[RMDB]
RNA sequence: GGGAACGACUCGAGUAGAGUCGAAAAGAGAAAAAGAAAAGGACCACUCCUGCGGGAGUUAAGGCUCUACGGACAGCCGGGUCCACCGCCGAAAAAGAAAAAGAAAAAGAAAAAGAAAAAGAAAGAACAUAAUAGUCAUUUUCGAAUGACUAUUAUGAAAAGAAACAACAACAACAAC
Reactivity to 2A3 in 0.01 (KOAc 150mM, MgCl2 10mM, bicine 150mM(pH8.5), 24C), signal-to-noise 3, nucleotides 027 to 126: g120a000g010a020a080a010a030a030g130a020a090a010a060g030g000a000c010c010a000c010u000c000c000u020g000c280g080g000g000a000g000u060u100a030a050g000g000c010u010c040u070a070c050g000g040a030c010a010g000c000c000g020g000g020u030c000c000a000c000c040g020c010c000g050a040a050a030a030a030g100a020a040a030a030a000g090a030a120a000a030a010g090a050a100a030a010a000g120a040a110a020a020a010g050a010a090a000g050a070a000
Reactivity to DMS in 0.01 (KOAc 150mM, MgCl2 10mM, bicine 150mM(pH8.5), 24C), signal-to-noise 3, nucleotides 027 to 126: g000a270g030a050a070a090a080a130g000a080a090a110a110g030g000a020c000c040a070c010u000c000c000u030g040c160g010g000g000a020g000u010u050a020a100g040g000c000u000c100u060a060c090g010g000a090c190a070g000c000c010g000g000g000u000c010c010a050c160c300g020c030c000g020a070a050a070a070a110g010a070a050a070a080a070g000a040a060a000a060a090g030a060a030a030a050a010g010a040a040a040a070a040g000a080a050a100g000a060a150